[RMDB]
RNA sequence: GGGAACGACUCGAGUAGAGUCGAAAAGUCAGUAGUUCGACGUGAGCACUAGCCCACCUCGAGAUGCUACGUGGACGAGGGCAUGCCCAAGACACACCUUAACCCUGGCGGGGGUCGCUAGGGUGAAGCCCGUUCACAAGUUCGCUUGUGAACGGGCAAAAGAAACAACAACAACAAC
Reactivity to DMS in 0.01 (KOAc 150mM, MgCl2 10mM, bicine 150mM(pH8.5), 24C), signal-to-noise 1, nucleotides 027 to 126: g010u020c040a140g010u000a010g000u010u000c020g010a030c140g030u000g000a040g000c030a250c290u000a160g000c010c040c010a020c000c050u000c020g000a030g020a060u010g000c000u020a050c020g000u020g000g020a040c020g010a140g000g000g000c130a090u030g010c000c000c060a140a130g020a110c190a070c110a100c080c020u010u000a190a040c000c000c000u030g000g000c000g020g000g000g030g020u010c010g000c030u000a000g000g010g000u000g020a040a060
Reactivity to 2A3 in 0.01 (KOAc 150mM, MgCl2 10mM, bicine 150mM(pH8.5), 24C), signal-to-noise 2, nucleotides 027 to 126: g030u010c020a020g050u020a000g010u010u030c040g040a000c010g050u040g090a000g080c020a060c230u130a040g000c050c010c000a020c010c010u010c050g040a050g020a110u130g010c010u020a020c060g300u140g090g000a020c000g000a100g000g000g030c030a050u160g010c000c000c000a040a030g140a010c080a000c020a010c110c050u080u100a050a020c010c000c000u000g040g000c000g000g090g000g220g020u110c020g000c030u000a000g010g010g000u020g000a000a010